[RMDB]
RNA sequence: GGGAACGACUCGAGUAGAGUCGAAAACUGGAUGCCGUCGUUGGCAUGAUAGUCGCGGUCUGUGCGCUAUUCGCGGCGUUUGCCGCGUCCUAUCACUGGGGCCAUCAUGUCGGUCGGCUGGUGGCGACGCACCGGUAUCGUUCGCGAUACCGGUGCGAAAAGAAACAACAACAACAAC
Reactivity to DMS in 0.01 (KOAc 150mM, MgCl2 10mM, bicine 150mM(pH8.5), 24C), signal-to-noise 2, nucleotides 027 to 126: c070u010g000g010a080u000g020c020c000g020u000c190g010u000u010g030g030c000a020u010g010a020u000a000g000u020c030g010c000g000g010u000c230u010g010u000g020c080g010c210u000a060u020u000c110g020c040g000g040c000g000u000u000u010g010c010c000g030c020g030u010c150c040u010a070u010c090a050c080u030g010g020g010g000c020c010a020u000c000a020u010g050u000c010g030g010u000c060g010g010c030u010g000g020u000g000g000c070g010a130
Reactivity to 2A3 in 0.01 (KOAc 150mM, MgCl2 10mM, bicine 150mM(pH8.5), 24C), signal-to-noise 2, nucleotides 027 to 126: c030u050g090g060a000u160g020c020c000g040u120c040g080u150u230g000g000c000a020u000g020a020u000a000g040u020c030g020c000g140g050u090c060u150g170u120g040c050g020c120u050a070u160u110c070g000c050g000g020c000g070u080u140u300g000c000c000g000c000g010u020c010c000u040a060u210c010a010c070u050g000g000g170g000c010c000a030u020c010a020u130g020u050c050g000g140u080c020g040g050c040u000g020g040u000g020g020c020g020a040